Structure probing data (2A3 and DMS) for a 177-nucleotide construct. Conditions: 150 mM KOAc, 10 mM MgCl2 and 150 mM bicine (pH 8.5), 24 C.
[RMDB]
RNA sequence: GGGAACGACUCGAGUAGAGUCGAAAAGGCGCCGCUCUACGGCUACUACUACUGCGAGCGGAUGAGUCAUUGCCUGGUCGGCGUCAUUCCGUACUAGUCGGUUGUCGGACUUGACCUACUGGGUCAGAGUAAAAUUUAGUUUCGACUAAAUUUUACUAAAAGAAACAACAACAACAAC
Reactivity to 2A3 in 0.01 (KOAc 150mM, MgCl2 10mM, bicine 150mM(pH8.5), 24C), signal-to-noise 3, nucleotides 027 to 126: g020g000c010g000c010c010g010c080u010c020u070a040c110g040g040c010u020a030c030u030a030c010u020a050c020u020g050c050g180a080g100c120g040g000a050u100g090a010g040u060c070a100u060u200g000c000c000u010g010g020u020c010g020g000c000g000u000c000a010u050u000c010c010g010u020a080c050u060a060g100u030c040g070g010u100u110g030u080c040g040g030a040c000u030u050g010a000c000c010u080a160c100u210g050g000g000u030c020a020g010
Reactivity to DMS in 0.01 (KOAc 150mM, MgCl2 10mM, bicine 150mM(pH8.5), 24C), signal-to-noise 6, nucleotides 027 to 126: g020g000c020g010c010c020g010c130u000c030u010a050c160g030g010c020u010a060c120u000a080c060u010a140c060u000g000c120g010a110g020c050g000g020a100u000g010a040g000u000c160a130u000u000g000c010c010u000g000g010u000c040g010g020c020g010u000c020a040u000u000c010c010g020u010a090c100u010a060g020u000c050g000g000u010u010g020u000c030g000g000a130c060u000u000g010a020c000c000u000a100c230u010g000g010g010u000c030a070g000

It was measured as part of the RMDB library OK2TST. The DMS profile rests on 9,694 reads.